RNA sequence: GGGAACGACUCGAGUAGAGUCGAAAACAAGGACGUUUCGACGUCCUUGAUAGGACCGCCCUUUUGGGCUAAGGCCAUACGCACAGCCGGGUCCACUGCCGAACGCAAACCCCUUCGGGGGUUUGAAUGCAUUUCGUACAUUCGUGUACGAAAUGCAAAAAGAAACAACAACAACAAC
Reactivity to DMS in 0.01 (KOAc 150mM, MgCl2 10mM, bicine 150mM(pH8.5), 24C), signal-to-noise 2, nucleotides 027 to 126: c000a000a020g020g000a020c010g030u000u010u030c250g010a060c000g000u000c000c000u000u010g000a120u000a040g010g000a010c020c010g000c000c000c000u000u010u010u010g030g000g000c010u020a000a050g000g000c060c030a210u000a120c100g030c130a080c160a150g030c020c020g010g000g000u000c000c000a080c110u000g020c070c030g000a100a080c230g000c010a010a010a000c000c000c000c000u000u040c230g030g020g000g010g000u000u000u000g020a100a090
Reactivity to 2A3 in 0.01 (KOAc 150mM, MgCl2 10mM, bicine 150mM(pH8.5), 24C), signal-to-noise 1, nucleotides 027 to 126: c000a000a000g000g000a010c020g010u040u040u130c210g020a000c010g000u050c000c000u020u000g000a000u010a000g030g000a000c010c030g030c010c000c000u110u080u150u300g060g010g000c120u100a110a120g000g000c000c020a070u080a190c150g000c050a010c020a020g020c000c000g030g000g000u000c020c000a030c020u050g070c020c030g110a120a050c050g020c070a000a010a020c000c000c040c060u020u070c130g090g000g010g000g030u010u000u000g000a020a000
Structure probing data (DMS and 2A3) for a 177-nucleotide construct. In probing experiments dimethyl sulfate is read out at A N1 and C N3, which are open when not base-paired. Conditions: 150 mM KOAc, 10 mM MgCl2 and 150 mM bicine (pH 8.5), 24 C. DMS adducts were read by reverse transcription with MarathonRT.